[RMDB]
Overview: An RNA of 177 nucleotides, treated with 2A3 and DMS and read out base by base. For DMS the reverse transcriptase was MarathonRT. The reactions ran in a buffer of 150 mM KOAc, 10 mM MgCl2 and 150 mM bicine (pH 8.5), at 24 C.
RNA sequence: GGGAACGACUCGAGUAGAGUCGAAAAAAAAAACCAGCGUCUGGUGGCGCUGGCCGGGACUACAACUCAAGCCGUCGGAUACGCCGUGCAGGAUUCGGCGGACGGUGACGCGCUGCGUCAAAGAUCGCCUAUUGGUAGCAUUCGUGCUACCAAUAGGAAAAGAAACAACAACAACAAC
Reactivity to 2A3 in 0.01 (KOAc 150mM, MgCl2 10mM, bicine 150mM(pH8.5), 24C), signal-to-noise 7, nucleotides 027 to 126: a000a000a000a000a000a000c000c000a010g000c010g020u020c020u240g300g040u300g030g020c000g000c000u000g010g000c000c010g060g010g020a030c030u080a050c120a180a030c020u050c100a080a020g020c000c000g000u010c010g080g050a060u070a130c040g010c040c020g050u100g080c090a110g090g080a110u050u060c010g000g000c000g000g000a000c010g040g000u050g000a000c010g040c010g050c100u220g000c010g010u020c010a020a040a020g050a080u100c080g020
Reactivity to DMS in 0.01 (KOAc 150mM, MgCl2 10mM, bicine 150mM(pH8.5), 24C), signal-to-noise 3, nucleotides 027 to 126: a030a040a060a040a050a120c000c020a020g000c020g010u010c000u030g030g030u020g010g010c000g010c010u010g010g010c070c020g010g020g000a090c030u020a060c120a080a070c070u010c040a140a120g000c000c000g010u010c000g010g000a100u000a170c050g010c020c030g010u030g010c090a170g000g010a170u030u000c020g000g000c010g000g010a030c040g000g020u010g010a030c040g010c040g020c110u020g000c040g050u000c000a110a070a050g010a090u030c090g000